An RNA of 177 nucleotides, treated with 2A3 and DMS and read out base by base.
The RNA was probed in 150 mM KOAc, 10 mM MgCl2 and 150 mM bicine (pH 8.5) at 24 C.
DMS adducts were read by reverse transcription with MarathonRT.
RNA sequence: GGGAACGACUCGAGUAGAGUCGAAAAGAUAUGGAACUUGCCUACUACCCACCUUAUUAGGUCGGAAACGACCUAUUAAGAGGUAGGAACUUUUCCUAAGUCAAAGUUGAUCGUUCGCGAUCAACAACGGUCUUAUUGUGUUCGCACAAUAAGACCGAAAAGAAACAACAACAACAAC
Reactivity to 2A3 in 0.01 (KOAc 150mM, MgCl2 10mM, bicine 150mM(pH8.5), 24C), signal-to-noise 2, nucleotides 027 to 126: g000a030u040a030u060g010g010a060a090c210u250u260g100c020c000u010a000c010u050a080c060c110c040a100c050c000u000u000a000u010u040a020g000g000u000c010g050g000a020a010a000c000g000a000c000c010u030a010u000u000a000a000g010a030g000g000u010a000g020g070a000a070c020u210u130u150u000c010c000u000a070a030g040u020c070a250a000a000g000u000u000g000a000u000c000g040u100u080c300g020c030g100a020u000c000a000a000c000a010a000
Reactivity to DMS in 0.01 (KOAc 150mM, MgCl2 10mM, bicine 150mM(pH8.5), 24C), signal-to-noise 2, nucleotides 027 to 126: g030a100u030a140u010g000g020a030a030c300u020u000g000c010c020u000a120c000u000a080c010c050c050a300c100c000u010u000a040u010u000a010g000g000u000c010g030g010a030a030a070c000g000a010c000c010u010a000u000u000a000a000g000a100g000g000u000a000g000g010a060a110c260u030u000u020u000c000c010u010a010a150g000u000c030a090a130a160g020u000u010g010a000u000c000g020u000u010c160g010c000g000a000u000c000a000a010c010a060a190